[RMDB]
RNA sequence: GGGAACGACUCGAGUAGAGUCGAAAAGAUAUGGACGUGAUAAGGGAGCUAGUAUCGGAAACGAUACAUAGCGAAGAACUUAUACGUCCUAAGUCAAAACAUUCAAGGUGUUCGCACCUUGAAUGAACCUAGUUAGUUCCUUCGGGAACUAACUAGGAAAAGAAACAACAACAACAAC
Reactivity to DMS in 0.01 (KOAc 150mM, MgCl2 10mM, bicine 150mM(pH8.5), 24C), signal-to-noise 2, nucleotides 027 to 126: g000a020u000a050u010g000g020a010c000g020u000g000a020u010a000a010g010g030g010a300g000c010u000a000g000u010a000u000c000g030g010a020a010a010c020g030a000u000a000c000a080u000a010g010c000g050a160a120g010a140a050c000u000u000a000u000a000c000g010u000c000c000u010a010a030g000u000c010a170a090a090a220c020a010u000u000c000a000a010g030g060u030g010u000u040c280g010c000a000c000c000u000u000g010a030a000u020g000a060a060
Reactivity to 2A3 in 0.01 (KOAc 150mM, MgCl2 10mM, bicine 150mM(pH8.5), 24C), signal-to-noise 2, nucleotides 027 to 126: g000a000u010a010u070g000g000a010c000g010u210g300a030u040a040a000g130g070g030a170g000c010u000a000g010u010a010u000c000g010g000a020a020a000c020g000a000u000a010c080a300u010a000g020c020g020a090a070g050a020a020c000u010u000a010u000a020c000g000u000c000c010u000a010a000g000u000c020a010a040a120a110c000a010u000u000c000a000a000g000g000u010g080u100u150c300g100c100a000c000c000u010u020g000a000a000u000g000a010a000
Structure probing data (DMS and 2A3) for a 177-nucleotide construct. The reactions ran in a buffer of 150 mM KOAc, 10 mM MgCl2 and 150 mM bicine (pH 8.5), at 24 C.